[RMDB]
RNA sequence: GGGAACGACUCGAGUAGAGUCGAAAACUCUGUGUGCUGGCACUGAAUAUCCUCAACGAGAAGAUCUACAUCUUCCUGUGGUUCUGGUUUAUCAUCUUGGCCACCAUCUCCGGCGUGGCUGUGCUCAGCCUACGAUCGUCUUCGGACGAUCGUAGGCAAAAGAAACAACAACAACAAC
Reactivity to DMS in 0.01 (KOAc 150mM, MgCl2 10mM, bicine 150mM(pH8.5), 24C), signal-to-noise 2, nucleotides 027 to 126: c060u020c010u010g000u000g030u010g020c080u000g010g000c030a020c050u010g000a060a160u000a090u000c000c070u000c100a060a060c190g000a080g040a050a020g000a000u000c210u000a220c230a120u000c010u000u000c010c060u000g030u010g020g000u000u000c050u000g000g000u000u000u000a090u010c080a090u000c090u000u000g010g000c010c030a040c030c050a050u010c130u010c110c140g050g010c060g040u000g020g010c080u000g000u020g020c060u020c100a130
Reactivity to 2A3 in 0.01 (KOAc 150mM, MgCl2 10mM, bicine 150mM(pH8.5), 24C), signal-to-noise 1, nucleotides 027 to 126: c010u000c000u030g050u010g000u080g000c070u020g060g120c000a000c050u020g090a080a020u050a040u070c020c020u040c050a040a010c040g040a040g040a100a030g010a040u020c030u210a070c030a110u020c030u000u040c020c020u080g040u070g080g050u100u110c000u040g000g070u060u140u080a160u030c040a040u000c070u050u120g030g000c010c030a000c000c010a100u070c030u070c110c040g100g000c120g010u020g020g000c010u040g050u010g050c000u000c120a040